[RMDB]
RNA sequence: GGGAACGACUCGAGUAGAGUCGAAAAAAGAUUGAUAGUGGCUAUGUAAAACAGGAGCUUGGAAAGAGUUCUAGACGUAUAGGCACUCAAUCACUACGAAUUUUGGAAACAAACACUCCUGUAAAGCAAGGCAACCUUCGCAGAUCAUGGACGGCAAUCACUACCAGUCAUUCGUGACUGGUAGUGAAAAAGAAACAACAACAACAAC
Reactivity to 2A3 in 0.01 (KOAc 150mM, MgCl2 10mM, bicine 150mM(pH8.5), 24C), signal-to-noise 2, nucleotides 027 to 156: a000a000g010a020u020u040g030a040u050a170g050u000g040g000c010u030a030u050g070u110a080a150a070a050c090a070g000g060a030g000c070u180u130g160g150a160a260a050g040a060g010u000u000c000u010a040g010a130c060g030u040a010u010a050g050g000c040a000c010u030c000a010a000u060c010a010c100u130a060c060g100a140a140u060u080u070u040g000g000a110a060a040c050a060a060a020c030a060c070u000c010c010u050g030u090a120a000a000g030c010a020a030g090g000c020a060a120c010c010u060u050c060g000c050a000g050a110u100c000a050u120g050g020a030c030g090g020c010a010a070
The record gives the reactivity of an RNA of 207 nucleotides to 2A3. High 2A3 reactivity points to a flexible backbone, as in loops and unpaired stretches. The data come from the RNA Mapping Database (RMDB), library OK3TST. The 2A3 profile rests on 895 reads. Conditions: 150 mM KOAc, 10 mM MgCl2 and 150 mM bicine (pH 8.5), 24 C. Values cover nucleotides 27 to 156.